[RMDB]
RNA sequence: GGGAACGACUCGAGUAGAGUCGAAAAGAGCUUUUGUCCGGAAUGGUUCCGCCGUGAUCGGGCCAUGCAAUAGUUGCCAACGACAACUAUGCUCCGGUUCCUCAGGCAGCGUAACGCUGCUUGAAAGAUGACGGCAAUCGCUUCGGCGAUUGCCGAAGAUGACAACUAACUUCGGUUAGUUGUCAUCAAAAGAAACAACAACAACAAC
Reactivity to DMS in 0.01 (KOAc 150mM, MgCl2 10mM, bicine 150mM(pH8.5), 24C), signal-to-noise 1, nucleotides 027 to 156: g050a100g030c040u000u000u010u000g010u000c010c050g000g000a140a050u000g000g000u000u000c030c010g020c040c130g030u010g010a080u010c020g010g020g010c010c030a080u000g000c140a100a040u000a030g020u000u000g010c000c020a160a170c210g000a100c010a010a030c060u010a010u000g020c070u010c030c040g010g020u000u000c030c020u020c000a020g010g010c010a020g000c000g030u000a110a150c150g030c000u000g000c000u000u000g010a030a070a120g000a100u010g010a180c040g000g000c010a020a010u000c010g030c000u000u010c300g050g000c000g000a010u000u000g000c060c000g010a010a010
Reactivity to 2A3 in 0.01 (KOAc 150mM, MgCl2 10mM, bicine 150mM(pH8.5), 24C), signal-to-noise 4, nucleotides 027 to 156: g060a010g010c040u090u150u150u160g080u030c000c010g030g020a050a030u060g010g000u300u300c050c060g010c050c080g170u150g060a220u110c020g000g000g000c000c000a010u070g000c000a030a300u020a050g030u020u050g000c040c110a120a050c150g070a150c030a000a010c020u010a020u070g010c010u000c010c000g000g000u040u040c000c010u000c000a000g010g000c000a010g000c010g060u140a120a060c240g000c010u010g000c010u000u000g010a030a000a010g080a060u200g100a020c010g010g000c000a000a000u000c000g010c000u020u060c180g070g000c010g010a000u000u000g000c000c000g000a000a000
Structure probing data (DMS and 2A3) for a 207-nucleotide construct. The 2A3 profile rests on 2,583 reads.